[RMDB]
RNA sequence: GGGAACGACUCGAGUAGAGUCGAAAAAACGAAGCGGUUUGUGCGAAUAAUGGUGCAGUUGUGGGUUUGAGCGAAUCUGUGGCUCAGAGUUUGCAAAUGUCUUCUGCUCCUCGUACUCGUCGCGAGACCCGAUCAUUAUGUUCGCAUAAUGAUCGGGAAAAGAAACAACAACAACAAC
Reactivity to DMS in 0.01 (KOAc 150mM, MgCl2 10mM, bicine 150mM(pH8.5), 24C), signal-to-noise 2, nucleotides 027 to 126: a050a070c040g000a150a090g020c010g000g000u010u000u000g010u010g000c000g010a100a100u020a110a110u020g020g020u000g000c010a040g000u010u010g030u020g020g000g000u000u000u010g010a160g020c060g000a020a050u010c060u010g020u000g020g010c140u000c010a020g000a030g000u000u000u020g000c050a030a080a030u000g010u000c060u000u000c000u000g010c040u000c020c000u000c020g020u000a030c020u000c150g010u000c010g020c030g000a130g000a170
Reactivity to 2A3 in 0.01 (KOAc 150mM, MgCl2 10mM, bicine 150mM(pH8.5), 24C), signal-to-noise 3, nucleotides 027 to 126: a000a000c040g040a080a000g010c010g000g050u020u040u020g000u010g000c000g020a060a000u300a150a120u290g040g000u030g000c020a020g020u060u040g050u170g070g050g000u040u030u050g050a020g030c040g010a020a020u030c040u060g130u150g210g000c030u040c100a020g010a030g120u070u080u050g010c010a050a040a020u240g180u120c000u030u000c000u030g010c000u010c000c000u010c000g000u000a000c020u010c030g020u000c000g030c010g020a020g060a020
An RNA of 177 nucleotides, treated with DMS and 2A3 and read out base by base. The RNA was probed in 150 mM KOAc, 10 mM MgCl2 and 150 mM bicine (pH 8.5) at 24 C. The DMS profile rests on 2,245 reads. The 2A3 profile rests on 2,860 reads. Source: RMDB library OK2TST, as collected in RNAgym.